[RMDB]
RNA sequence: GGGAACGACUCGAGUAGAGUCGAAAACGCUGAGCGCGUCUUACGCGGCCGCAGCGGGACCCACAACAGCGGUGGUUUCCGCUGCCGAGGACGAGGUGUCGACCGCGAUUGCGUCGAUAUUCGGCGCGGUAGCGCUGGAGUUCGCUCCAGCGCUACCAAAAGAAACAACAACAACAAC
Reactivity to 2A3 in 0.01 (KOAc 150mM, MgCl2 10mM, bicine 150mM(pH8.5), 24C), signal-to-noise 4, nucleotides 027 to 126: c020g030c050u090g060a040g130c070g000c020g070u030c060u080u100a060c030g000c000g010g030c010c020g000c010a000g000c000g020g000g000a000c010c100c010a010c010a090a140c060a070g220c090g120g000u020g010g000u020u000u000c000c000g020c000u000g010c000c020g150a140g010g030a010c010g070a130g230g160u260g010u060c020g010a100c030c000g000c000g120a120u030u180g000c010g010u050c010g000a010u020a170u300u120c010g010g010c000g000c000
Reactivity to DMS in 0.01 (KOAc 150mM, MgCl2 10mM, bicine 150mM(pH8.5), 24C), signal-to-noise 3, nucleotides 027 to 126: c020g020c030u010g010a110g020c070g000c050g010u010c090u010u000a110c020g020c020g020g010c020c080g010c010a010g000c020g010g000g000a020c020c000c000a020c040a070a140c200a080g010c200g030g010u000g000g000u000u000u000c000c000g020c010u000g000c010c030g020a090g000g010a030c000g010a170g020g010u010g000u000c020g010a020c020c020g000c030g000a160u010u000g020c000g030u010c010g010a100u000a170u010u000c010g020g000c010g000c080